[RMDB]
Source information: Structure probing data (DMS and 2A3) for a 177-nucleotide construct. For 2A3, 1,838 sequencing reads were counted. Source: RMDB library M2PK90, as collected in RNAgym. The reactions ran in a buffer of 150 mM KOAc, 10 mM MgCl2 and 150 mM bicine (pH 8.5), at 24 C. Reactivities are given for positions 27 through 126.

RNA sequence: GGGAACGACUCGAGUAGAGUCGAAAAUCAUAGCUUCACCAGCGCGACCUGGUCCUCCUCGAGCUGGCCCGCGGCCGCGAGCUCAGCUUUUACCUUCCCGCCCACCUCCUCGCGCAGGUACACCGAAACUUGCAGUCAAAUUCGUUUGACUGCAAGUAAAAGAAACAACAACAACAAC
Reactivity to DMS in 0.01 (KOAc 150mM, MgCl2 10mM, bicine 150mM(pH8.5), 24C), signal-to-noise 3, nucleotides 027 to 126: u010c090a080u010a100g010c060u000u000c100a070c040c030a070g050c040g010c050g010a050c090c050u000g000g000u010c030c020u000c020c040u000c040g000a050g020c030u000g000g020c020c010c030g010c040g030g040c210c130g020c030g000a030g010c020u010c030a020g000c010u010u010u000u000a120c090c100u000u010c010c020c020g020c040c020c010a100c040c020u000c020c020u000c040g020c050g020c050a070g010g000u010a050c140a090c030c050g000a090a090
Reactivity to 2A3 in 0.01 (KOAc 150mM, MgCl2 10mM, bicine 150mM(pH8.5), 24C), signal-to-noise 1, nucleotides 027 to 126: u120c020a050u070a140g030c020u100u090c040a030c040c010a010g080c040g010c030g020a060c020c040u040g020g000u030c030c010u010c000c000u000c020g010a010g030c050u010g020g010c000c000c000g030c000g030g060c070c080g020c010g010a040g030c090u100c210a000g040c000u080u060u040u050a010c000c000u030u010c000c000c010g020c000c020c000a020c000c010u010c000c000u020c020g040c040g000c020a030g000g040u040a020c020a010c030c000g120a100a020